[RMDB]
The record gives the reactivity of an RNA of 177 nucleotides to DMS and 2A3. Conditions: 150 mM KOAc, 10 mM MgCl2 and 150 mM bicine (pH 8.5), 24 C. The data come from the RNA Mapping Database (RMDB), library M2PK90.

RNA sequence: GGGAACGACUCGAGUAGAGUCGAAAAGGAAACAAGUCUAGUAACUGCUCCAAUCAGUUUAAUAUCAGUGACGUCCUCUAUCCGAGGACAAUAUAUUAAAUGGAUAAAAGGAGCAGGAGAAAAAAAACUAACUCAAUAUCUUCGGAUAUUGAGUUAGAAAAGAAACAACAACAACAAC
Reactivity to DMS in 0.01 (KOAc 150mM, MgCl2 10mM, bicine 150mM(pH8.5), 24C), signal-to-noise 1, nucleotides 027 to 126: g010g000a110a080a080c080a060a150g020u010c090u000a090g020u030a060a170c000u010g000c000u000c000c010a070a120u000c030a150g010u000u000u000a020a020u000a010u000c180a160g060u010g030a060c160g000u000c000c000u000c030u020a160u040c300c160g000a010g050g000a000c000a030a050u000a010u000a000u000u000a000a000a000u030g000g000a030u000a050a040a060a150g000g000a000g000c000a000g000g010a040g000a020a000a000a080a010a010a170a170
Reactivity to 2A3 in 0.01 (KOAc 150mM, MgCl2 10mM, bicine 150mM(pH8.5), 24C), signal-to-noise 1, nucleotides 027 to 126: g110g030a140a070a010c050a110a080g070u040c030u130a070g060u070a150a050c000u020g020c000u000c000c020a000a040u080c030a000g000u000u060u000a050a000u020a030u060c030a050g120u030g240a100c080g000u050c020c000u030c010u060a120u100c080c070g010a000g000g010a000c030a020a000u000a000u000a000u010u010a000a000a000u030g000g000a040u080a170a260a010a230g000g000a000g000c000a010g000g000a020g020a100a060a000a000a000a000a000a040